The record gives the reactivity of an RNA of 177 nucleotides to 2A3 and DMS. For DMS the reverse transcriptase was MarathonRT. For DMS, 7,772 sequencing reads were counted. The 2A3 profile rests on 5,815 reads. It was measured as part of the RMDB library OK1LIB. For 2A3 the reverse transcriptase was SuperScript II with manganese.
RNA sequence: GGGAACGACUCGAGUAGAGUCGAAAAGAGUAAGGCGGCCACAGCAGAAGCGUUCAUGUCGCAGCCGCUGUCAAAUUCUGGUGAAUCUGCGAAUUCUGCUGAAGAGCACGGAAUAGGACCGUGCAAAACUAUAUGGUCGGUUCGCCGACCAUAUAGUAAAAGAAACAACAACAACAAC
Reactivity to 2A3 in 0.01 (KOAc 150mM, MgCl2 10mM, bicine 150mM(pH8.5), 24C), signal-to-noise 6, nucleotides 027 to 126: g120a010g100u130a110a030g050g010c000g010g000c010c020a080c010a020g020c000a010g020a050a010g040c080g060u120u120c130a120u260g110u150c030g000c020a000g010c020c000g000c010u000g010u000c020a020a040a100u150u030c050u110g070g010u120g060a040a050u050c000u050g010c010g030a040a070u030u000c010u010g020c000u020g030a080a020g040a020g020c000a010c010g000g030a100a060u170a180g030g070a040c000c000g000u020g010c000a000a000a000
Reactivity to DMS in 0.01 (KOAc 150mM, MgCl2 10mM, bicine 150mM(pH8.5), 24C), signal-to-noise 4, nucleotides 027 to 126: g010a100g020u050a060a040g020g010c040g000g010c040c210a100c040a010g000c040a000g000a030a020g020c060g020u020u050c220a110u020g010u030c020g020c010a100g030c080c020g010c010u020g010u030c080a040a080a080u030u010c020u000g030g000u010g000a030a040u010c050u000g000c030g020a050a050u000u000c020u000g030c030u010g000a140a080g000a190g000c010a010c010g020g000a120a140u040a170g000g020a080c000c000g000u000g000c010a000a030a070